[RMDB]
RNA sequence: GGGAACGACUCGAGUAGAGUCGAAAAGUCUGACGAUCUUGAUUGGCGUUACGAGACCCCCUCGGCUAUAAACUAUGCUUUGAUAGACGGUAUAUUUUUGCGUUAUCACUGUCCCGGAUUGGACACGGUCUUGUGGGAUAGGCAUGCCCAGAAGGCACCAGACUGGUGAAUUCGUUCACCAGUCUGGAAAAGAAACAACAACAACAAC
Reactivity to 2A3 in 0.01 (KOAc 150mM, MgCl2 10mM, bicine 150mM(pH8.5), 24C), signal-to-noise 1, nucleotides 027 to 156: g000u000c020u050g050a000c020g050a090u000c040u040u140g050a160u070u140g000g060c000g000u030u070a080c060g040a030g130a300c110c000c000c000c000u040c020g070g000c030u010a020u000a200a000a020c050u060a100u150g000c000u060u170u160g030a060u070a040g110a070c020g070g060u170a060u020a150u070u000u020u190u140g010c000g000u000u030a010u020c030a010c040u020g000u080c000c000c000g060g000a200u110u070g020g030a020c040a000c210g040g000u040c010u050u040g170u110g040g000g000a010u080a120g000g090c060a060u250g070c000c000c000a010g020a030a040g000g060c000a000
Structure probing data (2A3) for a 207-nucleotide construct.
For 2A3, 469 sequencing reads were counted.
Conditions: 150 mM KOAc, 10 mM MgCl2 and 150 mM bicine (pH 8.5), 24 C.